An RNA of 177 nucleotides, treated with 2A3 and DMS and read out base by base. 2A3 adducts were read by reverse transcription with SuperScript II with manganese. Values are in units of 0.01, from 0 to 300, in steps of 10. The reactions ran in a buffer of 150 mM KOAc, 10 mM MgCl2 and 150 mM bicine (pH 8.5), at 24 C.

RNA sequence: GGGAACGACUCGAGUAGAGUCGAAAACCGAGAGGCCUCUCAGUCUCUAAUUAUAGCUAUAUGCUGUAGUUAGAGAUUAAUGCCACGAUUUAUUUAUCCGAAUUAAUAGUAGGAAAAAUUACUCUGACUCAUCAUGAUUAUUCGUAAUCAUGAUGAGAAAAGAAACAACAACAACAAC
Reactivity to 2A3 in 0.01 (KOAc 150mM, MgCl2 10mM, bicine 150mM(pH8.5), 24C), signal-to-noise 9, nucleotides 027 to 126: c010c010g010a040g010a030g020g000c000c000u020c000u020c050a010g000u000c000u000c000u000a000a000u000u000a000u000a000g000c020u030a020u030a050u300g000c000u000g000u000a010g010u000u000a000g000a000g000a000u000u020a030a010u110g010c000c000a030c030g020a010u050u210u130a080u040u130u060a090u100c000c000g020a020a030u120u060a170a130u130a130g010u010a010g000g000a040a040a000a000a000u090u080a050c040u000c020u040g030a030
Reactivity to DMS in 0.01 (KOAc 150mM, MgCl2 10mM, bicine 150mM(pH8.5), 24C), signal-to-noise 5, nucleotides 027 to 126: c010c000g010a120g030a110g000g000c020c030u020c020u000c110a000g010u000c000u000c000u000a000a000u000u000a000u000a010g020c010u000a080u010a100u030g030c000u000g020u000a010g010u000u000a000g010a000g000a010u000u000a040a000u010g010c010c000a110c110g010a100u010u030u010a030u010u000u000a120u010c010c000g000a100a300u000u000a080a080u010a090g010u000a130g000g000a000a060a060a030a030u010u010a090c150u000c020u000g000a300